The data come from the RNA Mapping Database (RMDB), library OK3TST. Structure probing data (DMS and 2A3) for a 207-nucleotide construct. For 2A3, 4,125 sequencing reads were counted. The reactions ran in a buffer of 150 mM KOAc, 10 mM MgCl2 and 150 mM bicine (pH 8.5), at 24 C.

RNA sequence: GGGAACGACUCGAGUAGAGUCGAAAAUUGGGAGGGAAGGAUCUCUUGAGCCCAGGAGUUCAAGACCAGCCUGAGCAACAUAGCAAGAUUCCAUCUUUACACAAAAUUUAAAAAUUGGCCAGGCAUGGUUGUACAUUCCUGUAAUCCCAGCUACUCACCACUAGUAAUGAUUCGUCAUUACUAGUGGAAAAGAAACAACAACAACAAC
Reactivity to DMS in 0.01 (KOAc 150mM, MgCl2 10mM, bicine 150mM(pH8.5), 24C), signal-to-noise 3, nucleotides 027 to 156: u010u000g020g010g010a100g000g000g010a110a070g020g010a060u000c030u000c030u010u010g010a110g020c020c030c020a180g000g020a080g030u000u010c020a070a100g000a030c040c040a100g010c010c010u010g000a070g000c010a030a080c050a130u000a100g000c070a090a080g010a090u000u010c090c060a120u000c020u000u000u010a130c070a210c120a060a060a090a130u000u000u000a040a050a070a090a080u000u000g010g020c020c000a020g010g020c010a060u000g030g000u010u000g020u000a090c060a120u000u000c010c010u000g000u000a060a120u000c000c000c000a100g000c040u000a090c020u000c040a300
Reactivity to 2A3 in 0.01 (KOAc 150mM, MgCl2 10mM, bicine 150mM(pH8.5), 24C), signal-to-noise 6, nucleotides 027 to 156: u100u030g010g000g000a030g000g040g060a070a040g040g030a060u010c020u010c000u060u050g040a030g010c010c040c050a040g020g070a110g010u030u080c080a070a020g000a030c000c030a010g000c000c000u040g010a060g060c000a030a090c040a110u170a080g090c080a050a020g010a140u240u060c090c020a070u020c050u060u180u240a060c090a010c020a020a170a090a110u150u260u260a140a210a090a070a080u150u120g090g000c000c010a000g010g000c070a110u010g020g000u010u040g010u020a020c020a060u060u020c000c000u030g090u130a020a030u000c000c000c010a010g030c010u050a050c010u000c010a040